An RNA of 207 nucleotides, treated with 2A3 and DMS and read out base by base.
Source: RMDB library RNAMAK, as collected in RNAgym.
The 2A3 profile rests on 3,904 reads.
Values cover nucleotides 27 to 156.
High 2A3 reactivity points to a flexible backbone, as in loops and unpaired stretches.
The reactions ran in a buffer of 150 mM KOAc, 10 mM MgCl2 and 150 mM bicine (pH 8.5), at 24 C.

RNA sequence: GGGAACGACUCGAGUAGAGUCGAAAACCUGCUUCGGCAGGCACUUUGGGGUCAGAGGGAGGUCCCGAAAGUGCAUCGAUCCUGAAGCCUCCACGGGGGAGCACUAAGGGACCGACGAUCUCUGACGGAGGCACCCGAAAUACUUGUUCGCAAGUAAAUGGAUAACGAAUUUCGAUUCGUUAUCCAUAAAAGAAACAACAACAACAAC
Reactivity to 2A3 in 0.01 (KOAc 150mM, MgCl2 10mM, bicine 150mM(pH8.5), 24C), signal-to-noise 3, nucleotides 027 to 156: c000c000u010g010c000u050u030c070g120g000c020a010g010g020c020a060c080u090u050u090g020g020g030g000u020c020a020g000a020g000g010g000a020g010g000u000c000c020c000g020a130a140a020g040u010g000c010a100u300c030g030a040u030c000c000u050g060a110a060g060c000c030u050c020c020a030c030g000g010g010g000g000a020g010c000a000c000u040a080a120g010g000g020a000c000c000g000a020c000g010a010u020c010u000c000u000g000a000c000g000g040a050g010g000c030a060c010c030c010g000a060a060a070u120a040c010u020u010g020u090u160c130g010c140a010a030g070u160a100a210
Reactivity to DMS in 0.01 (KOAc 150mM, MgCl2 10mM, bicine 150mM(pH8.5), 24C), signal-to-noise 2, nucleotides 027 to 156: c030c000u000g010c020u000u020c240g050g030c020a020g000g050c000a040c070u000u000u010g000g040g000g040u000c000a090g010a130g000g010g020a110g050g020u000c010c000c010g000a080a050a030g020u000g020c010a250u000c080g020a080u030c000c000u000g000a150a170g010c030c040u000c020c040a300c050g040g000g010g000g030a100g000c040a040c010u010a100a300g000g000g000a010c000c000g020a040c060g000a120u000c010u000c000u040g000a040c000g020g040a070g010g030c060a230c010c010c050g000a140a070a100u000a030c040u000u000g000u000u020c130g010c070a020a070g000u000a040a160